About this RNA: This 177-nucleotide RNA was probed chemically with DMS and 2A3. DMS adducts were read by reverse transcription with MarathonRT. Values cover nucleotides 27 to 126. In probing experiments dimethyl sulfate is read out at A N1 and C N3, which are open when not base-paired. The DMS profile rests on 12,247 reads.
[RMDB]
RNA sequence: GGGAACGACUCGAGUAGAGUCGAAAAGAUAUGGAGAUAUGACUGGGAGCUUGACAUCGGAAACGAUGUCCAAGCAUCGAUCAGUAUAUCUCCUAAGUCAAAACUGAUUGUGUUCGCACAAUCAGAACUACGGUUAAAAGUUCGCUUUUAACCGUAGAAAAGAAACAACAACAACAAC
Reactivity to DMS in 0.01 (KOAc 150mM, MgCl2 10mM, bicine 150mM(pH8.5), 24C), signal-to-noise 6, nucleotides 027 to 126: g000a020u000a050u010g000g000a010g000a020u000a010u010g010a030c010u000g010g000g000a230g020c000u000u000g000a020c000a000u000c000g020g000a020a010a020c000g000a010u000g000u000c120c180a000a000g030c010a120u000c300g000a140u000c000a010g000u000a030u000a010u000c010u000c000c000u000a000a040g000u000c010a110a070a090a230c000u000g010a020u000u000g020u000g020u000u020c300g050c010a010c000a000a010u000c000a000g010a080a170
Reactivity to 2A3 in 0.01 (KOAc 150mM, MgCl2 10mM, bicine 150mM(pH8.5), 24C), signal-to-noise 8, nucleotides 027 to 126: g010a000u020a000u060g000g000a000g000a000u010a010u070g300a160c010u010g010g080g120a270g010c000u000u010g010a000c000a000u010c000g000g000a000a010a000c000g000a000u010g000u000c130c060a010a010g000c020a040u210c140g170a300u050c000a000g000u000a000u000a000u000c000u000c000c000u000a000a000g000u000c020a010a020a160a240c010u010g000a010u000u020g020u010g060u100u130c300g050c140a000c000a010a010u000c000a000g010a020a020